Description: This 177-nucleotide RNA was probed chemically with 2A3 and DMS. The RNA was probed in 150 mM KOAc, 10 mM MgCl2 and 150 mM bicine (pH 8.5) at 24 C. Reactivities are given for positions 27 through 126. The 2A3 profile rests on 2,326 reads.

RNA sequence: GGGAACGACUCGAGUAGAGUCGAAAAGAUAUGGAGCGAUCGUGAACUACUCGGGGAGUGUCGGAAACGACAUGAAAGACGAGCACGAGUCGCUCCUAAGUCAAAGAGUACACUUCGGUGUACUCAACUGAACAGCGUAGUUCGCUACGCUGUUCAGAAAAGAAACAACAACAACAAC
Reactivity to 2A3 in 0.01 (KOAc 150mM, MgCl2 10mM, bicine 150mM(pH8.5), 24C), signal-to-noise 2, nucleotides 027 to 126: g040a010u080a000u140g020g010a000g010c010g000a010u030c050g000u040g000a050a150c050u180a020c020u300c000g070g060g000g060a180g050u010g000u020c020g000g000a040a130a000c010g010a000c000a010u070g060a120a190a000g300a060c030g000a000g000c000a000c040g030a060g040u020c000g000c010u000c010c000u010a000a000g010u010c030a000a000a090g000a000g010u000a010c030a000c030u090u280c300g110g020u010g010u000a010c000u030c000a000a000
Reactivity to DMS in 0.01 (KOAc 150mM, MgCl2 10mM, bicine 150mM(pH8.5), 24C), signal-to-noise 1, nucleotides 027 to 126: g000a060u030a300u020g000g030a000g000c020g010a110u000c000g000u000g000a100a100c040u040a210c020u000c000g010g020g010g030a280g000u000g010u000c060g020g000a110a100a180c000g020a000c010a000u000g000a070a180a110g000a080c030g000a050g000c000a030c000g000a020g000u000c000g000c010u000c000c000u000a000a080g000u010c100a100a090a170g000a040g000u000a000c000a020c000u000u000c260g030g000u000g000u000a000c020u000c000a030a070